[RMDB]
RNA sequence: GGGAACGACUCGAGUAGAGUCGAAAAUGAAGCAAAUCCAUAAUUGCCAAUGAUGAGCAAUUCGCUAUUGCCGCCUAACAACGGUUAGCCGGGGCUGCUAGAGCCUUGUUACCAAAGAUAGCCGGCGUUACGGCAUGAUGGUUCGCCAUCAUGCCAAUCUUCCAAAUGGUUUCGACCAUUUGGAAGAAAAAGAAACAACAACAACAAC
Reactivity to DMS in 0.01 (KOAc 150mM, MgCl2 10mM, bicine 150mM(pH8.5), 24C), signal-to-noise 1, nucleotides 027 to 156: u010g000a150a150g000c030a050a070a110u000c060c020a090u000a030a060u000u000g020c020c040a110a150u020g030a180u010g010a120g000c010a060a030u000u000c050g010c020u000a080u010u000g000c000c000g000c030c020u010a110a070c030a050a070c010g000g000u000u010a030g050c060c010g020g020g000g000c030u000g010c140u000a110g020a060g000c000c000u020u000g010u000u000a240c090c040a060a050a110g000a100u000a030g020c060c110g030g000c050g050u010u000a030c080g000g000c000a000u000g000a020u000g000g000u000u000c300g000c030c000a000u000c000a000u000g000c000c000a020a020
Reactivity to 2A3 in 0.01 (KOAc 150mM, MgCl2 10mM, bicine 150mM(pH8.5), 24C), signal-to-noise 4, nucleotides 027 to 156: u120g020a010a010g050c030a060a060a080u080c040c010a060u080a130a040u050u010g010c010c010a080a160u280g120a140u100g020a140g040c000a000a020u080u030c060g000c100u090a070u070u230g030c010c000g000c010c020u050a040a020c030a030a020c040g030g020u100u070a010g070c060c010g020g000g010g040c020u040g020c070u180a070g050a000g200c010c000u010u030g020u030u060a020c010c020a090a020a040g030a030u030a010g030c020c000g000g020c000g040u050u130a060c080g000g000c000a000u000g000a000u000g000g070u030u070c130g010c080c000a000u000c000a000u000g020c000c000a000a010
An RNA of 207 nucleotides, treated with DMS and 2A3 and read out base by base. Conditions: 150 mM KOAc, 10 mM MgCl2 and 150 mM bicine (pH 8.5), 24 C. Reactivities are given for positions 27 through 156. For 2A3 the reverse transcriptase was SuperScript II with manganese. The DMS profile rests on 3,036 reads.